[RMDB]
RNA sequence: GGGAACGACUCGAGUAGAGUCGAAAACUCUUCCUAGGUCCGGAAUCAACCUCCAUCUGAUCUGUCCGGAGCUUUUUCGGCGGAGGAGCUCCCUCCCCGUCCUUCCCUUUUCUUAUUAUUCCGAGGAACCGCUGGCACUUCGGUGCCAGCAAAAGAAACAACAACAACAAC
Reactivity to 2A3 in 0.01 (KOAc 150mM, MgCl2 10mM, bicine 150mM(pH8.5), 24C), signal-to-noise 2, nucleotides 027 to 129: c020u010c000u000u000c000c000u030a020g040g050u020c040c000g000g020a000a060u060c010a060a150c020c030u010c020c020a090u050c110u160g100a090u010c020u060g130u000c050c020g030g000a010g010c010u020u030u030u030u070c000g070g000c050g000g000a020g000g000a020g030c020u000c000c000c000u000c000c020c000c000g040u030c000c000u020u010c000c000c000u000u080u070u050c050u050u100a170u080u050a060u170u000c020c000g040a050g020g020a010a010c020c000
Reactivity to DMS in 0.01 (KOAc 150mM, MgCl2 10mM, bicine 150mM(pH8.5), 24C), signal-to-noise 3, nucleotides 027 to 129: c040u040c010u110u000c010c000u000a150g060g040u010c110c030g020g060a070a070u000c150a220a090c150c000u060c000c000a030u100c090u040g040a110u010c030u080g040u020c050c060g000g040a070g000c160u030u030u010u020u070c050g020g020c300g060g000a050g000g000a030g020c210u030c010c000c050u040c060c010c040c010g000u030c030c010u000u050c010c000c020u140u000u050u020c080u040u080a190u010u020a010u010u220c040c000g090a020g010g080a030a060c140c090
Structure probing data (2A3 and DMS) for a 170-nucleotide construct. The reactions ran in a buffer of 150 mM KOAc, 10 mM MgCl2 and 150 mM bicine (pH 8.5), at 24 C. It was measured as part of the RMDB library 15KLIB. For 2A3 the reverse transcriptase was SuperScript II with manganese.